[RMDB]
RNA sequence: GGGAACGACUCGAGUAGAGUCGAAAAGAUAUGGAAAUGUAUUAUGGCUAUGAAGUCGGAAACGAUGGAGCCAGUACACGUUUCCUAAGUCAAAAGCUUGUAGUCAAGUUCGCUUGACUACAAGCAACUGUACACUUUGCUUCGGCAAAGUGUACAGAAAAGAAACAACAACAACAAC
Reactivity to DMS in 0.01 (KOAc 150mM, MgCl2 10mM, bicine 150mM(pH8.5), 24C), signal-to-noise 1, nucleotides 027 to 126: g030a050u000a300u030g000g000a010a020a000u030g030u000a100u000u010a280u010g010g010c000u030a240u030g000a150a150g010u000c000g010g020a080a080a300c010g000a010u000g030g000a020g000c000c000a020g000u000a030c070a040c050g030u000u000u000c000c000u000a060a100g020u010c030a080a150a070a200g000c000u000u000g000u000a000g040u000c000a000a000g030u000u000c300g020c000u000u000g010a010c000u030a000c020a000a000g010c000a000a010
Reactivity to 2A3 in 0.01 (KOAc 150mM, MgCl2 10mM, bicine 150mM(pH8.5), 24C), signal-to-noise 1, nucleotides 027 to 126: g000a010u080a090u100g000g000a040a020a020u060g040u020a050u170u140a110u130g020g000c060u050a170u300g030a000a000g070u000c000g000g000a030a010a010c020g010a000u030g010g020a010g000c000c000a010g000u010a010c060a010c030g000u000u000u010c010c050u010a140a020g070u060c040a000a040a140a110g000c000u000u000g000u000a020g000u010c000a000a020g000u050u080c200g040c060u010u040g010a000c010u030a000c000a000a020g010c000a010a010

This 177-nucleotide RNA was probed chemically with DMS and 2A3. The reactions ran in a buffer of 150 mM KOAc, 10 mM MgCl2 and 150 mM bicine (pH 8.5), at 24 C. The 2A3 profile rests on 1,265 reads.